[RMDB]
RNA sequence: GGGAACGACUCGAGUAGAGUCGAAAAAUGUAGGCAACACCCAGGACACCUACUGUGUGAAAGAAUACUAGAAGAUCUUCCUAUUCAAGGACCUAAGGGCGUAGAUGAAGAUGAUCCUGUUAACUCUGCCUACAACAUGAAACUGGCCAAGUUUUCAUCAUAUAGCGCCAUUCGUGGCGCUAUAUGAAAAAGAAACAACAACAACAAC
Reactivity to 2A3 in 0.01 (KOAc 150mM, MgCl2 10mM, bicine 150mM(pH8.5), 24C), signal-to-noise 3, nucleotides 027 to 156: a020u070g000u010a000g020g000c040a030a010c010a090c010c050c030a030g030g020a080c050a060c060c040u110a080c080u060g020u010g020u000g120a080a120a070g060a150a050u110a170c100u140a060g080a200a030g020a050u020c000u040u030c020c000u080a060u030u140c080a090a120g130g030a200c010c030u100a090a150g090g020g000c020g020u020a030g030a150u150g070a040a030g000a040u060g010a030u000c000c000u030g000u090u030a090a080c040u020c050u050g000c020c000u020a000c000a030a000c020a070u120g110a090a060a020c040u040g100g000c060c040a050a030g020u000u000u030u080c020a030
Reactivity to DMS in 0.01 (KOAc 150mM, MgCl2 10mM, bicine 150mM(pH8.5), 24C), signal-to-noise 2, nucleotides 027 to 156: a150u000g020u010a000g020g010c000a100a170c050a120c100c070c030a090g000g020a160c110a050c060c030u010a090c000u010g000u010g060u000g040a120a090a170g010a070a100u020a140c110u030a110g020a080a070g000a100u010c010u000u000c020c000u000a130u000u000c050a010a100g000g010a080c000c000u000a020a110g040g000g070c000g060u000a130g020a120u020g010a120a110g000a050u010g020a060u000c010c020u000g040u000u000a070a130c050u010c100u000g030c000c000u000a060c010a000a050c110a100u010g040a060a040a050c100u010g000g030c020c030a030a300g030u000u000u000u020c060a300